An RNA of 207 nucleotides, treated with DMS and 2A3 and read out base by base. Values are in units of 0.01, from 0 to 300, in steps of 10.
RNA sequence: GGGAACGACUCGAGUAGAGUCGAAAAUUGCAUUUGAGUAUCCUGAAAACGGGCUUUUCAGCAUGGAACGUACAUAUUAAAUAGUAGGAGUGCAUAGUGGCCCGUAUAGCAGGCAUUAACAUUCCUGAAAACGUGAAAAGGUUCGCCUUUUCACGAAGUCUUAACGACUGUUCGCAGUCGUUAAGACAAAAGAAACAACAACAACAAC
Reactivity to DMS in 0.01 (KOAc 150mM, MgCl2 10mM, bicine 150mM(pH8.5), 24C), signal-to-noise 1, nucleotides 027 to 156: u000u000g000c020a270u000u000u000g020a130g010u000a070u000c030c000u010g040a070a030a170a020c030g010g000g050c030u000u000u010u020c120a250g000c010a060u020g010g030a120a090c050g000u000a170c090a160u000a130u010u000a070a100a260u000a170g030u000a150g000g030a110g010u000g030c010a120u020a090g000u000g040g000c010c000c030g110u000a020u000a190g000c090a030g050g020c140a070u000u000a040a030c080a170u000u000c000c000u000g000a020a020a150a120c040g030u000g000a010a010a030a030g030g100u000u000c300g030c000c000u000u000u000u000c000a030c000g010a030a100
Reactivity to 2A3 in 0.01 (KOAc 150mM, MgCl2 10mM, bicine 150mM(pH8.5), 24C), signal-to-noise 2, nucleotides 027 to 156: u080u050g000c000a050u030u040u070g020a020g050u110a070u060c010c000u000g040a010a010a010a030c020g000g010g000c060u140u120u080u080c060a030g000c010a030u080g000g060a180a020c030g050u020a020c010a050u180a080u160u280a130a220a110u140a120g030u020a020g060g100a070g020u020g000c020a040u050a270g050u050g040g000c000c010c000g010u020a000u010a010g000c010a000g000g030c000a000u000u020a020a020c000a030u010u020c000c000u010g020a080a080a060a000c010g010u000g000a000a000a000a000g070g000u070u080c100g140c010c000u000u000u000u000c000a000c000g000a000a000
For 2A3 the reverse transcriptase was SuperScript II with manganese. For DMS the reverse transcriptase was MarathonRT. The reactions ran in a buffer of 150 mM KOAc, 10 mM MgCl2 and 150 mM bicine (pH 8.5), at 24 C.